RNA sequence: GGGAACGACUCGAGUAGAGUCGAAAAAUAAGCCAGAGAUGGACUUCAAGUGUGUCGUGUACUUUUGGCAAGGAAGAGAUGCUUCAAAUAUGGGAUGGUUGAAUUUUACAUUCCAGCUUCAACCAAAAUACUAUUUUAAUUUCGAUUAAAAUAGUAUAAAAGAAACAACAACAACAAC
Reactivity to 2A3 in 0.01 (KOAc 150mM, MgCl2 10mM, bicine 150mM(pH8.5), 24C), signal-to-noise 1, nucleotides 027 to 126: a000u080a000a050g000c020c000a010g000a000g040a040u120g030g000a070c000u050u010c110a100a090g140u010g020u010g010u200c060g060u130g070u200a130c080u020u130u130u120g030g010c040a050a040g120g010a130a000g010a010g030a110u010g070c050u100u050c000a060a140a000u140a090u170g020g020g050a000u050g090g090u020u020g000a040a060u070u120u110u070a050c010a010u040u010c000c030a010g020c010u060u080c070a040a040c010c000a060a070a040
Reactivity to DMS in 0.01 (KOAc 150mM, MgCl2 10mM, bicine 150mM(pH8.5), 24C), signal-to-noise 3, nucleotides 027 to 126: a100u010a070a120g010c020c010a040g010a120g010a110u000g010g000a070c020u000u000c110a070a140g000u000g010u000g030u000c040g030u000g010u000a050c080u000u000u020u000g010g000c050a080a110g000g010a060a090g000a150g010a080u000g010c050u000u000c070a040a060a070u000a070u000g010g010g000a070u000g010g010u000u000g000a040a040u010u000u010u010a090c070a080u000u000c010c010a120g000c110u000u000c020a020a080c020c020a050a080a080